Annotation: This 177-nucleotide RNA was probed chemically with DMS and 2A3. High 2A3 reactivity points to a flexible backbone, as in loops and unpaired stretches. For 2A3, 5,136 sequencing reads were counted.

[RMDB]
RNA sequence: GGGAACGACUCGAGUAGAGUCGAAAAAGGCAGAGCGUUAUUGGCCGGAAGAAGAGGAAGAUUCCUUGUCAUUUCCGGAAUCUGGACACGAUGCUAUAAAGGUGACAAGGGAUGCGGAGGCGUCGUAAGUAUGGACUAGGUUCGCCUAGUCCAUACUAAAAGAAACAACAACAACAAC
Reactivity to DMS in 0.01 (KOAc 150mM, MgCl2 10mM, bicine 150mM(pH8.5), 24C), signal-to-noise 5, nucleotides 027 to 126: a060g010g020c040a040g010a170g000c080g000u010u000a070u040u010g000g010c010c020g000g010a080a040g010a090a120g020a090g020g010a110a130g010a130u020u000c000c010u000u010g000u000c080a080u000u010u000c050c090g000g000a050a050u000c050u000g020g010a060c110a100c110g000a080u030g000c030u010a100u020a080a120a090g010g000u010g010a020c050a020a050g000g000g000a010u010g020c080g030g000a060g010g000c030g000u000c040g000u000a050
Reactivity to 2A3 in 0.01 (KOAc 150mM, MgCl2 10mM, bicine 150mM(pH8.5), 24C), signal-to-noise 7, nucleotides 027 to 126: a000g070g010c040a030g010a050g060c050g010u060u090a130u210u170g050g010c010c010g010g010a030a010g050a040a020g020a020g060g020a030a080g070a300u110u080c010c010u010u010g070u080c040a090u050u050u040c020c000g010g030a010a050u080c050u110g040g020a020c020a000c090g040a090u070g010c010u030a010u140a240a140a030g010g020u070g000a020c030a020a020g040g010g000a020u040g050c040g020g030a000g030g000c000g000u030c020g000u050a030